[RMDB]
RNA sequence: GGGAACGACUCGAGUAGAGUCGAAAAGGCGGGGUUGUAUAAAUCUCUGAAGGUAGAAGAUUACCGCCGUGAAAGUGCCAACCGCGAUACCGCACCGCGACCGCUGGGGCUUCAGGAUCGCCUGAGCACCACGGCCAUUAUUCGUAAUGGCCGUGGUAAAAGAAACAACAACAACAAC
Reactivity to DMS in 0.01 (KOAc 150mM, MgCl2 10mM, bicine 150mM(pH8.5), 24C), signal-to-noise 1, nucleotides 027 to 126: g000g060c060g000g010g060g060u000u000g030u010a100u000a170a140a090u000c020u010c030u000g020a140a160g000g000u020a050g010a110a050g000a070u010u000a050c050c000g000c020c020g010u010g010a030a090a090g020u000g040c050c030a080a120c060c070g020c060g000a040u000a110c070c040g000c070a080c050c020g030c040g010a120c110c080g030c060u020g020g010g000g010c060u000u000c050a060g020g020a090u000c160g030c010c030u000g010a030g010c140